[RMDB]
RNA sequence: GGGAACGACUCGAGUAGAGUCGAAAAAAUCACCGGGUUCUGUGCAUUCACACAUAAAGCAGGUAUCCAUGCCAAGGCCAUUUUGGCUAACCCAUCUACCUACGAAAUCUUGGACCCUCACGAUUUCCGACUGGGCUCGAUUCGUCGAGCCCAGUCGAAAAGAAACAACAACAACAAC
Reactivity to 2A3 in 0.01 (KOAc 150mM, MgCl2 10mM, bicine 150mM(pH8.5), 24C), signal-to-noise 2, nucleotides 027 to 126: a000a010u280c130a080c060c000g000g000g040u020u050c050u050g000u010g070c070a100u030u300c090a000c020a030c000a150u190a110a100a040g050c020a010g000g140u120a110u020c040c010a020u010g030c010c010a080a110g030g030c010c070a120u050u080u060u260g010g000c030u030a010a010c010c010c010a010u030c030u010a130c000c000u020a070c050g040a030a080a060u120c050u160u180g080g060a030c020c000c000u000c000a060c030g000a020u000u000u000c000

Notes: The record gives the reactivity of an RNA of 177 nucleotides to 2A3. The RNA was probed in 150 mM KOAc, 10 mM MgCl2 and 150 mM bicine (pH 8.5) at 24 C. Values cover nucleotides 27 to 126. The 2A3 profile rests on 603 reads.